[RMDB]
RNA sequence: GGGAACGACUCGAGUAGAGUCGAAAAUGUGGGUCAGACUCAACGGCCGGAGGCCAAGGUCAAGUUGAAUGUUGCAGUCCAGCCAGCGUCAGAAAACUGCCAUGGAAGCCUGGAAACCUAGGCGGCUUGUCUAUGUAGAAUUCGUUCUACAUAGACAAAAAGAAACAACAACAACAAC
Reactivity to DMS in 0.01 (KOAc 150mM, MgCl2 10mM, bicine 150mM(pH8.5), 24C), signal-to-noise 9, nucleotides 027 to 126: u030g020u010g000g000g010u010c040a070g010a170c050u000c070a080a090c120g010g010c030c040g010g000a100g010g020c040c040a060a120g000g010u000c050a070a120g010u000u000g010a060a070u020g010u010u010g010c040a090g000u010c030c040a100g000c030c020a050g020c060g010u010c060a070g000a070a050a080a100c070u000g000c030c030a100u020g000g000a090a120g010c020c020u000g010g000a090a070a100c120c010u010a120g010g000c010g010g010c100u000
Reactivity to 2A3 in 0.01 (KOAc 150mM, MgCl2 10mM, bicine 150mM(pH8.5), 24C), signal-to-noise 5, nucleotides 027 to 126: u170g000u060g020g000g010u040c030a020g030a090c010u010c050a040a050c040g030g000c020c010g020g020a070g030g000c030c010a020a030g020g000u060c050a050a090g020u020u070g100a150a070u110g020u050u050g020c010a000g030u020c030c010a010g000c020c000a020g000c020g040u030c000a020g100a030a080a020a050c030u060g020c000c010a010u030g090g030a090a000g010c000c010u020g040g010a110a090a040c020c000u000a020g000g040c000g000g020c010u010